Conditions: 150 mM KOAc, 10 mM MgCl2 and 150 mM bicine (pH 8.5), 24 C. Chemical mapping of a 177-nucleotide RNA with 2A3.

RNA sequence: GGGAACGACUCGAGUAGAGUCGAAAAGCCAGAUGCUUCGGCAUCUGGCAAAGGAAUUGAGGUUAGUGUCGACCUGUUAAACAGACUCACAAAUAAUUAAAAAAACCGCCCUCUUCGGAGGGCGGAAGCUAGAGAUAUUCUUCGGAAUAUCUCUAGCAAAAGAAACAACAACAACAAC
Reactivity to 2A3 in 0.01 (KOAc 150mM, MgCl2 10mM, bicine 150mM(pH8.5), 24C), signal-to-noise 2, nucleotides 027 to 126: g000c000c010a000g010a030u000g000c030u060u080c230g150g040c010a000u000c010u020g010g000c000a000a000a020g080g000a100a070u140u220g050a010g020g000u050u080a040g010u060g000u020c010g000a000c000c020u080g090u150u250a040a000a000c030a010g000a000c000u080c030a020c020a030a270a070u240a070a140u280u270a060a220a080a000a000a020a000c020c030g020c000c040c020u010c030u000u080c280g070g010a030g000g020g000c000g000g010a010a000